[RMDB]
RNA sequence: GGGAACGACUCGAGUAGAGUCGAAAAUGAUGGCAUAGUCUGAGGAGCCACCAAGGCUAUAAGCCCCUGAUAGCAAGCAAGAUAAGUGGUAACUCAGUUCUUGCACUGUUGUAAGCUUGCCAUUAAACGCACUCAUACGGUUCGCCGUAUGAGUGCGAAAAGAAACAACAACAACAAC
Reactivity to DMS in 0.01 (KOAc 150mM, MgCl2 10mM, bicine 150mM(pH8.5), 24C), signal-to-noise 1, nucleotides 027 to 126: u000g000a000u000g000g020c000a000u030a070g020u020c060u000g000a080g000g000a300g020c000c000a010c010c040a200a060g000g000c030u000a000u000a090a140g010c100c000c040c090u020g000a040u000a050g020c020a070a090g020c190a110a080g020a100u000a130a190g000u000g000g020u020a010a300c050u000c000a000g000u000u000c000u000u000g000c010a090c210u000g000u020u030g040u000a040a020g010c300u000u000g000c000c010a020u020u000a110a050a120